[RMDB]
RNA sequence: GGGAACGACUCGAGUAGAGUCGAAAAGCUACACUCUUCGGAGUGUAGCAAACCCGAUGUAGCGGCACUUACGGAGCUUCAUACAUCUAAGAGUGCAAAUAAAAAUCGGCGACUUCGGUCGCCGAAAUCUAUGAUAGGUGUUCGCACCUAUCAUAGAAAAAGAAACAACAACAACAAC
Reactivity to DMS in 0.01 (KOAc 150mM, MgCl2 10mM, bicine 150mM(pH8.5), 24C), signal-to-noise 2, nucleotides 027 to 126: g010c000u000a000c010a000c010u000c000u000u000c160g030g020a030g010u000g020u010a010g000c000a020a040a070c000c010c010g020a070u020g010u000a040g010c220g010g000c000a020c010u010u000a130c300g020g010a020g000c080u000u000c190a130u000a110c100a030u000c010u000a110a230g000a050g010u010g010c060a040a090a120u020a040a040a070a110a080u000c010g000g020c040g010a030c000u010u010c220g070g020u000c010g050c030c000g000a000a010a030
Reactivity to 2A3 in 0.01 (KOAc 150mM, MgCl2 10mM, bicine 150mM(pH8.5), 24C), signal-to-noise 2, nucleotides 027 to 126: g000c000u000a010c010a000c000u050c000u030u090c170g110g020a000g000u000g010u000a010g000c000a000a020a000c010c000c020g020a110u100g060u140a010g140c110g040g000c040a010c020u090u090a040c180g050g010a030g030c010u150u070c110a090u040a120c030a090u000c040u040a140a030g040a030g070u060g070c050a040a130a070u160a030a110a060a020a020u030c000g000g010c030g000a000c000u060u090c300g070g060u020c000g000c000c010g000a010a000a000